[RMDB]
RNA sequence: GGGAACGACUCGAGUAGAGUCGAAAAUGACCGGCACGUUCACCAGCCCGAAGGCGAUCGAACCCGUCCAAAUGGCUCGCAUGUAAGUGAGUAUGCCUUGAUUGUCCGCGAGCGGAACGUCACGGCGCACCAAGGGUAGCUUCGGCUACCCUUGGUGAAAAGAAACAACAACAACAAC
Reactivity to 2A3 in 0.01 (KOAc 150mM, MgCl2 10mM, bicine 150mM(pH8.5), 24C), signal-to-noise 1, nucleotides 027 to 126: u080g070a050c020c000g020g070c060a040c050g030u080u100c030a030c150c020a070g010c010c000c020g020a010a030g000g040c070g010a030u030c000g040a080a090c000c010c020g000u080c060c030a060a050a090u140g050g000c020u010c000g070c000a020u160g150u300a180a120g010u030g040a000g060u090a100u180g030c030c020u020u020g000a000u060u120g060u010c030c020g000c020g050a050g070c030g000g000a020a030c000g000u020c050a060c040g000g000c000g000
Reactivity to DMS in 0.01 (KOAc 150mM, MgCl2 10mM, bicine 150mM(pH8.5), 24C), signal-to-noise 2, nucleotides 027 to 126: u020g000a120c010c030g000g000c100a000c040g030u000u000c030a100c120c060a200g010c050c010c040g020a150a100g000g000c010g010a010u000c030g000a050a120c100c030c050g000u010c090c100a050a120a120u010g000g000c000u000c020g000c030a090u000g030u020a080a120g000u000g010a080g000u000a070u020g030c010c010u020u000g000a000u000u000g010u000c000c120g010c020g010a120g000c020g020g010a030a000c020g000u000c060a030c000g000g010c020g030
This 177-nucleotide RNA was probed chemically with 2A3 and DMS. For DMS, 1,344 sequencing reads were counted. The 2A3 profile rests on 1,254 reads. The RNA was probed in 150 mM KOAc, 10 mM MgCl2 and 150 mM bicine (pH 8.5) at 24 C.